[RMDB]
RNA sequence: GGGAACGACUCGAGUAGAGUCGAAAAAUAAUGCACAUAAUCCAGUCGCAGACGCUCGCUAGGUCGCUGCGUCGCGACGGAUGUGCCAACGAGAAAGCGACCUAAGGAUAUAGCGUAUAAGCGACAAAAAUAUAUAAUAUUUCGAUAUUAUAUAUUUAAAAGAAACAACAACAACAAC
Reactivity to 2A3 in 0.01 (KOAc 150mM, MgCl2 10mM, bicine 150mM(pH8.5), 24C), signal-to-noise 1, nucleotides 027 to 126: a000u260a010a220u200g070c010a030c000a060u220a070a000u020c000c000a020g000u000c000g010c040a050g000a010c000g000c030u070c030g030c110u110a020g010g010u000c010g000c000u010g000c010g000u000c010g000c010g000a000c000g000g000a000u030g000u010g020c020c030a100a040c090g070a010g120a130a060a030g010c000g000a030c000c000u000a030a060g090g000a010u070a050u200a260g010c020g030u160a180u030a300a080g010c000g060a000c030a020a300
The record gives the reactivity of an RNA of 177 nucleotides to 2A3. For 2A3, 495 sequencing reads were counted. The data come from the RNA Mapping Database (RMDB), library OK1LIB. The reactions ran in a buffer of 150 mM KOAc, 10 mM MgCl2 and 150 mM bicine (pH 8.5), at 24 C. For 2A3 the reverse transcriptase was SuperScript II with manganese.